[RMDB]
RNA sequence: GGGAACGACUCGAGUAGAGUCGAAAAAUAGAAUUCGUUCUAUCAUUAGGGGUCACGCAAGUUGUAUCCGAGGAUCUAUACUGAAGCCUCCACGGUAUAGGGAGGUAUACAAUGAUGACCGUGACGGAGGCACCCAGAGUUCAGAUUUCGAUCUGAAGUAUGCACUAACAUUCGUGUUAGUGCAUACAAAAGAAACAACAACAACAAC
Reactivity to DMS in 0.01 (KOAc 150mM, MgCl2 10mM, bicine 150mM(pH8.5), 24C), signal-to-noise 2, nucleotides 027 to 156: a060u000a040g000a050a060u010u040c260g030u000u000c000u000a000u000c020a180u000u010a150g030g020g020g030u000c000a040c020g030c080a110a230g010u010u010g030u000a030u010c000c040g000a170g010g030a090u000c030u000a070u000a040c010u000g010a030a190g000c010c000u010c000c000a280c010g000g040u000a020u010a030g020g010g020a040g020g060u010a010u000a040c020a030a050u000g020a140u010g030a080c090c030g020u010g000a070c020g030g050a050g090g030c030a120c030c010c010a300g020a190g010u000u010c040a000g010a170u000u000u000c200g010a130u000c020u000g010a100a160
Reactivity to 2A3 in 0.01 (KOAc 150mM, MgCl2 10mM, bicine 150mM(pH8.5), 24C), signal-to-noise 4, nucleotides 027 to 156: a000u050a010g030a010a050u100u060c160g070u060u000c040u020a060u080c040a090u100u190a090g000g090g040g020u050c010a000c030g060c050a050a080g030u000u000g000u000a010u000c000c000g010a300g010g000a010u000c000u000a000u000a000c010u010g060a160a040g020c000c000u000c000c000a010c000g000g000u000a000u000a000g000g000g020a000g000g020u040a000u000a010c000a000a040u090g090a180u200g080a160c140c070g010u010g000a010c000g000g000a000g000g010c000a020c000c000c010a030g020a040g180u030u020c020a000g010a040u060u070u260c210g100a050u000c020u010g010a040a020

About this RNA
An RNA of 207 nucleotides, treated with DMS and 2A3 and read out base by base. Conditions: 150 mM KOAc, 10 mM MgCl2 and 150 mM bicine (pH 8.5), 24 C. Values cover nucleotides 27 to 156. For DMS, 3,647 sequencing reads were counted. For 2A3 the reverse transcriptase was SuperScript II with manganese. Source: RMDB library RNAMAK, as collected in RNAgym.